[RMDB]
RNA sequence: GGGAACGACUCGAGUAGAGUCGAAAAUUUUGAGCUUUCGAGCUCAAAACAACUGGUGUCCGGACCAGGAAAAACAGAUUUACACGAAGUGAAAGAUCGAAAGGGCCACCAUGUUCGCAUGGUGGAACUCGAUAAUACUGUUCGCAGUAUUAUCGAGAAAAGAAACAACAACAACAAC
Reactivity to 2A3 in 0.01 (KOAc 150mM, MgCl2 10mM, bicine 150mM(pH8.5), 24C), signal-to-noise 6, nucleotides 027 to 126: u010u000u000u000g010a010g000c010u060u040u190c260g080a010g000c000u000c000a000a000a000a010c010a060a100c000u010g000g020u020g070u060c040c020g030g050a010c010c010a020g080g050a040a110a000a000a010c040a040g050a050u070u080u160a050c100a020c130g180a300a040g020u030g080a090a060a050g030a030u040c020g050a090a040a060g060g030g010c000c000a000c010c000a010u010g030u030u030c230g010c100a000u000g010g000u000g000g010a000a000
Reactivity to DMS in 0.01 (KOAc 150mM, MgCl2 10mM, bicine 150mM(pH8.5), 24C), signal-to-noise 6, nucleotides 027 to 126: u000u000u000u000g000a020g010c000u000u000u010c150g020a030g010c000u000c000a000a010a020a030c130a090a120c010u000g000g000u010g010u000c030c050g000g000a100c000c000a020g010g020a030a060a070a080a060c170a130g010a040u000u000u000a290c050a050c030g010a110a130g000u000g000a050a100a120g000a010u000c020g010a060a080a080g010g000g000c010c000a010c000c000a000u000g000u010u010c190g020c000a000u000g000g010u000g000g010a010a010